Chemical mapping of a 177-nucleotide RNA with DMS and 2A3. DMS (dimethyl sulfate) methylates the pairing face of unpaired adenines and cytosines. For 2A3 the reverse transcriptase was SuperScript II with manganese. For 2A3, 1,391 sequencing reads were counted. The DMS profile rests on 1,094 reads. As a SHAPE reagent, 2A3 marks flexible, mostly unpaired nucleotides at the ribose 2'-OH. It was measured as part of the RMDB library OK2TRN.
[RMDB]
RNA sequence: GGGAACGACUCGAGUAGAGUCGAAAAGGAUCCUCUCACAGGAUUGUCUCUGUGUUCCGAAACUCCAACAGUAUUGCUUCGGGACACUUACAGCAAUACUGUAGGUAUAGAGAGUAGGAGAGGAUCGGCUCCAUGCAGCAUUCGUGCUGCAUGGAGCAAAAGAAACAACAACAACAAC
Reactivity to DMS in 0.01 (KOAc 150mM, MgCl2 10mM, bicine 150mM(pH8.5), 24C), signal-to-noise 2, nucleotides 027 to 126: g000g000a040u000c010c000u000c000u010c000a110c050a050g000g010a140u000u000g010u000c040u000c020u000g060u000g010u010u000c020c000g000a050a090a100c050u020c080c050a120a040c050a090g020u000a120u000u000g010c010u000u010c260g000g010g010a080c300a050c070u000u000a040c240a040g010c010a020a030u000a180c000u010g000u000a030g020g000u000a130u020a010g000a080g000a050g020u010a100g000g000a060g000a000g000g000a000u000c020g000
Reactivity to 2A3 in 0.01 (KOAc 150mM, MgCl2 10mM, bicine 150mM(pH8.5), 24C), signal-to-noise 1, nucleotides 027 to 126: g110g000a000u000c010c000u020c000u020c000a040c000a050g120g000a140u100u280g150u020c020u000c000u100g020u010g030u070u030c010c000g010a050a010a050c050u090c050c020a020a030c040a070g090u060a040u020u120g050c000u040u050c030g110g000g030a050c060a010c110u020u100a000c010a010g000c020a040a020u000a100c000u000g000u000a010g050g020u020a020u130a070g190a000g010a000g060u060a050g000g070a010g000a000g000g000a000u000c020g000